[RMDB]
RNA sequence: GGGAACGACUCGAGUAGAGUCGAAAAACAAGAUAGUGUUAAGGGCGUGAUGGCAUGUGCCUGUAAUCCCAGCUACUCAUGAGGCUGAAGCAUGAGAAUUGCUUGAACCGGUGAGGCAAAGGUUGCAGUGAGCUGAGCUGAGAUCAUGCUACUGCACCUUAGGUUGAGCUUUCGAGCUCAACCUAAGAAAAGAAACAACAACAACAAC
Reactivity to DMS in 0.01 (KOAc 150mM, MgCl2 10mM, bicine 150mM(pH8.5), 24C), signal-to-noise 2, nucleotides 027 to 156: a060c060a070a100g010a170u000a060g020u000g000u010u000a060a090g000g010g020c020g000u000g000a150u000g040g010c040a120u000g010u010g010c020c010u000g020u000a020a080u000c000c010c010a190g040c020u000a050c020u010c000a050u020g020a170g010g040c000u000g010a050a060g000c000a030u000g000a270g010a230a180u000u020g010c040u000u000g000a050a050c020c010g020g020u000g020a060g000g020c080a060a080a070g000g020u000u000g030c000a020g010u010g000a060g010c020u010g010a130g010c080u010g010a180g000a080u000c040a030u000g030c050u010a030c050u010g000c010a050c040
Reactivity to 2A3 in 0.01 (KOAc 150mM, MgCl2 10mM, bicine 150mM(pH8.5), 24C), signal-to-noise 4, nucleotides 027 to 156: a000c100a060a030g090a100u150a060g070u050g030u210u170a100a130g000g000g000c030g020u060g010a050u030g070g040c030a030u130g040u060g100c010c010u000g030u070a010a020u030c020c010c000a010g020c040u090a120c000u020c020a000u050g070a050g150g000c060u080g060a000a000g020c000a010u010g010a020g070a140a090u220u050g000c000u010u010g040a030a010c020c000g000g040u040g010a010g030g050c030a080a030a040g030g000u060u040g010c010a000g020u030g130a020g040c030u040g020a020g000c060u060g110a040g010a180u040c020a030u110g000c010u030a040c000u010g000c000a000c000
This 207-nucleotide RNA was probed chemically with DMS and 2A3. The 2A3 profile rests on 2,391 reads.